[RMDB]
RNA sequence: GGGAACGACUCGAGUAGAGUCGAAAAGGAUGUUCACAAACAUCUAAAUCUUUCAAUAGCGAUGGUUCUUGCAGCUGGAGUUAGAAGAGGAACUAUUAAAAGCGCGUUACGAGUGUCUCAUGAAUUAGAUAUAGUGGAUGUUCGCAUCCACUAUAUCAAAAGAAACAACAACAACAAC
Reactivity to DMS in 0.01 (KOAc 150mM, MgCl2 10mM, bicine 150mM(pH8.5), 24C), signal-to-noise 7, nucleotides 027 to 126: g010g010a010u010g010u000u000c300a180c300a160a070a030c010a010u000c000u000a090a100a120u010c040u000u000u000c070a060a090u010a070g010c050g010a140u010g020g010u000u000c020u000u000g000c040a060g010c050u010g010g000a120g020u000u010a040g000a060a060g010a080g000g000a060a060c060u000a060u000u010a060a060a080a070g020c090g010c060g010u000u010a060c100g000a080g020u000g000u000c010u000c030a090u010g010a070a110u000u020a100
Reactivity to 2A3 in 0.01 (KOAc 150mM, MgCl2 10mM, bicine 150mM(pH8.5), 24C), signal-to-noise 5, nucleotides 027 to 126: g010g000a000u010g020u060u060c110a030c050a150a100a010c010a020u000c000u020a040a070a150u050c000u030u160u100c080a100a110u040a100g030c020g060a040u050g060g000u030u030c020u040u110g050c050a030g010c030u070g050g040a100g040u090u140a040g040a130a000g020a040g040g020a030a020c010u030a070u180u140a110a120a000a020g050c030g000c010g060u030u040a040c050g000a040g070u050g030u000c020u020c030a060u200g120a140a150u180u100a100